[RMDB]
RNA sequence: GGGAACGACUCGAGUAGAGUCGAAAAGAUUAUUUAAAAGACAUCCAUGGAAUGAGCCCGGAGGACAUAAUGUUAAGCACCACAAGCCAGGCACAAGCAUGAUGCAAUCUCACUUAUGUGCAGAAUCUUAACAAGUUGAACUCAUAGAAGCAGAGAAAUACUACUGCAUGUUCGCAUGCAGUAGUAUAAAAGAAACAACAACAACAAC
Reactivity to DMS in 0.01 (KOAc 150mM, MgCl2 10mM, bicine 150mM(pH8.5), 24C), signal-to-noise 1, nucleotides 027 to 156: g000a250u000u000a130u020u010u010a050a050a100a150g000a110c030a080u000c030c040a130u000g030g060a090a050u000g000a260g010c000c040c010g090g030a130g030g020a090c050a150u010a070a080u000g000u000u000a100a070g010c070a090c070c010a090c070a070a100g010c020c040a140g010g050c040a030c030a030a140g010c100a140u000g020a130u000g030c020a090a060u030c050u030c020a020c050u000u000a040u000g000u020g010c040a030g010a050a060u000c030u000u000a010a100c070a050a080g060u000u000g000a070a070c000u010c020a020u010a090g000a030a070g020c030a070g010a140g010a060a150
Reactivity to 2A3 in 0.01 (KOAc 150mM, MgCl2 10mM, bicine 150mM(pH8.5), 24C), signal-to-noise 2, nucleotides 027 to 156: g030a050u100u130a050u100u210u150a130a190a050a000g020a040c010a050u000c070c050a080u110g030g010a070a050u020g020a070g040c020c030c000g050g000a010g010g000a030c040a040u160a090a040u090g020u030u030a030a000g000c050a010c110c000a030c040a110a000g000c030c010a060g060g000c010a020c010a040a040g050c010a030u040g010a030u030g060c030a070a060u020c050u030c060a040c050u030u160a060u120g060u000g000c000a010g060a140a070u060c040u070u050a060a020c020a150a000g010u000u030g100a020a010c000u000c020a000u020a080g080a030a000g020c080a010g050a000g110a070a110

Record summary: Structure probing data (DMS and 2A3) for a 207-nucleotide construct. It was measured as part of the RMDB library OK3TST. For DMS the reverse transcriptase was MarathonRT.